[RMDB]
Structure probing data (2A3 and DMS) for a 177-nucleotide construct. For 2A3 the reverse transcriptase was SuperScript II with manganese. The reactions ran in a buffer of 150 mM KOAc, 10 mM MgCl2 and 150 mM bicine (pH 8.5), at 24 C. The DMS profile rests on 2,624 reads. For 2A3, 6,337 sequencing reads were counted. For DMS the reverse transcriptase was MarathonRT.

RNA sequence: GGGAACGACUCGAGUAGAGUCGAAAAGUUGAAGUGUUCGCACUUCAACAAACGCUCAACUCAUGGAGCGCUAGACGAAUAGCUACAUAUUCGACAUGAGAAAAAGACUGUAGUUCGCUACAGUCAAUCCAUAUUCGUACUUCGGUACGAAUAUGGAAAAAGAAACAACAACAACAAC
Reactivity to 2A3 in 0.01 (KOAc 150mM, MgCl2 10mM, bicine 150mM(pH8.5), 24C), signal-to-noise 4, nucleotides 027 to 126: g000u010u000g000a000a000g000u010g020u060u150c180g010c080a000c000u020u000c000a000a000c000a000a010a000c010g010c000u000c000a040a130c010u000c010a010u000g010g010a000g000c030g040c200u180a060g040a080c000g000a020a010u010a010g040c090u230a080c090a210u050a020u030u020c000g020a000c000a010u010g000a000g060a090a020a000a010a000g010a000c000u000g000u000a000g010u020u060c230g000c110u000a000c000a000g000u000c000a000a030
Reactivity to DMS in 0.01 (KOAc 150mM, MgCl2 10mM, bicine 150mM(pH8.5), 24C), signal-to-noise 3, nucleotides 027 to 126: g020u000u000g010a020a030g020u000g010u000u010c270g020c000a000c000u010u000c000a000a010c000a050a120a120c000g010c000u000c010a100a080c000u000c010a010u000g010g040a000g010c000g040c120u010a040g010a010c020g020a020a010u000a010g000c210u000a170c170a110u000a010u000u000c010g010a080c000a000u000g000a030g000a090a120a110a110a080g010a020c000u000g010u000a000g010u000u010c190g010c020u000a010c000a000g000u000c010a030a040